[RMDB]
RNA sequence: GGGAACGACUCGAGUAGAGUCGAAAAGGUGGCUCCUGGAGACGUCUCUCUACACGUGUAGGGGAGUCACCGAUUUAGCAUGUUCGUCCUACAUUAGAUGCGUCUACGCAGUAGGACGUUCAUGCGAGGGAUCGAUUACCUUCGGGUAGUCGAUCCCAAAAGAAACAACAACAACAAC
Reactivity to 2A3 in 0.01 (KOAc 150mM, MgCl2 10mM, bicine 150mM(pH8.5), 24C), signal-to-noise 9, nucleotides 027 to 126: g010g000u000g000g000c000u000c000c000u040g080g040a050g020a020c030g080u050c030u000c010u010c070u230a090c080a010c110g080u080g080u180a050g000g030g000g010a000g000u000c000a000c000c000g000a000u000u020u070a010g000c000a000u000g000u000u000c000g000u000c000c000u010a010c010a080u180u230a110g080a180u140g020c020g080u110c120u110a110c080g000c050a030g000u000a000g010g000a000c000g000u000u010c000a000u000g000c000g000a110
Reactivity to DMS in 0.01 (KOAc 150mM, MgCl2 10mM, bicine 150mM(pH8.5), 24C), signal-to-noise 4, nucleotides 027 to 126: g030g030u010g000g000c000u010c000c020u010g010g020a150g000a030c030g000u000c080u010c120u020c140u030a060c210a040c070g020u000g030u020a200g020g010g000g040a000g010u000c000a010c000c010g000a020u040u010u050a140g000c000a020u000g000u000u000c000g000u000c000c000u000a010c000a140u060u050a080g000a280u000g000c030g000u000c090u030a100c090g020c050a010g010u000a000g020g010a000c000g020u000u000c000a000u010g010c020g020a110
About this RNA:
Chemical mapping of a 177-nucleotide RNA with 2A3 and DMS. For 2A3, 17,756 sequencing reads were counted. For 2A3 the reverse transcriptase was SuperScript II with manganese. Conditions: 150 mM KOAc, 10 mM MgCl2 and 150 mM bicine (pH 8.5), 24 C.